Overview: Chemical mapping of a 207-nucleotide RNA with 2A3 and DMS.
[RMDB]
RNA sequence: GGGAACGACUCGAGUAGAGUCGAAAACCGUAGGAUGAUUCAAGAGCGAGGAUCUAUACCCGGAGCCACAUUCGAAAGAGUGUGGCCCGGAGUAUAGGGAGCUCGAAGAUCAUCCUAAACGGAAACGGAUUUUGUAGGUUCGCCUACAAAAUCCGAAUCGUAAUCAUUAGUUCGCUAAUGAUUACGAAAAAGAAACAACAACAACAAC
Reactivity to 2A3 in 0.01 (KOAc 150mM, MgCl2 10mM, bicine 150mM(pH8.5), 24C), signal-to-noise 2, nucleotides 027 to 156: c000c000g030u020a020g000g000a010u000g000a010u040u160c140a190a040g000a000g010c010g030a240g020g010a010u000c010u010a010u000a000c000c020c000g010g000a040g010c000c000a000c000a000u010u010c000g020a040a080a030g010a000g000u000g010u010g000g000c000c000c000g010g030a020g000u000a000u000a000g010g000g000a000g010c000u000c000g000a010a000g000a000u000c000a000u010c000c000u000a010a010a000c020g040g040a120a060a020c010g000g000a010u040u000u000u020g010u010a020g000g050u020u030c250g090c070c000u000a010c000a000a010a000a000u000c010c000g000a000a050
Reactivity to DMS in 0.01 (KOAc 150mM, MgCl2 10mM, bicine 150mM(pH8.5), 24C), signal-to-noise 1, nucleotides 027 to 156: c010c000g010u000a050g000g020a020u020g000a040u000u030c020a030a300g000a000g000c010g030a140g020g000a060u010c010u030a000u000a000c000c000c000g000g000a070g010c020c000a010c020a020u010u000c010g020a140a190a300g000a050g050u000g050u020g000g020c000c000c000g010g000a010g020u000a000u010a020g000g020g010a110g040c010u000c000g000a100a130g000a020u020c000a000u000c000c000u010a010a020a080c020g010g000a050a050a240c020g010g020a020u000u000u010u010g000u020a040g000g000u010u020c300g030c050c040u000a000c010a000a000a020a000u000c020c000g000a000a030
Conditions: 150 mM KOAc, 10 mM MgCl2 and 150 mM bicine (pH 8.5), 24 C. DMS adducts were read by reverse transcription with MarathonRT. The data come from the RNA Mapping Database (RMDB), library RNAMAK. 2A3 adducts were read by reverse transcription with SuperScript II with manganese.